RNA sequence: GGGAACGACUCGAGUAGAGUCGAAAAGAUAUGGACUUCGCAAUGGGUAGAUACGGGUCGGAAACGACCCGGUAUCUAUAAUCCAUAGCGAAGUCCUAAGUCAAAACCAGCGAGUUCGCUCGCUGGACCUUAAUAACGACUUCGGUCGUUAUUAAGGAAAAGAAACAACAACAACAAC
Reactivity to DMS in 0.01 (KOAc 150mM, MgCl2 10mM, bicine 150mM(pH8.5), 24C), signal-to-noise 5, nucleotides 027 to 126: g000a050u010a300u000g000g010a010c000u010u000c000g010c010a180a010u010g010g030g020u000a010g010a030u000a020c010g010g000g020u000c000g010g000a080a080a260c010g020a010c000c000c000g000g010u000a000u000c000u000a060u010a300a110u010c000c000a020u000a110g020c000g010a010a000g010u010c000c000u000a000a090g000u010c030a110a060a120a160c010c000a010g010c000g010a020g020u000u020c290g020c010u000c000g030c000u000g000g000a030
Reactivity to 2A3 in 0.01 (KOAc 150mM, MgCl2 10mM, bicine 150mM(pH8.5), 24C), signal-to-noise 3, nucleotides 027 to 126: g010a000u060a030u130g000g000a000c000u000u000c000g000c010a010a020u020g000g050g110u140a010g010a000u000a010c000g020g000g000u010c020g030g000a100a090a050c010g000a000c010c020c030g000g000u010a000u010c000u000a000u030a020a040u070c000c010a000u050a030g000c010g000a000a000g000u000c010c000u000a000a010g000u000c020a010a010a040a130c000c000a000g010c010g010a010g020u160u220c300g090c190u000c000g000c000u010g000g000a000
This 177-nucleotide RNA was probed chemically with DMS and 2A3. For 2A3 the reverse transcriptase was SuperScript II with manganese. Values cover nucleotides 27 to 126. The data come from the RNA Mapping Database (RMDB), library TTRDES.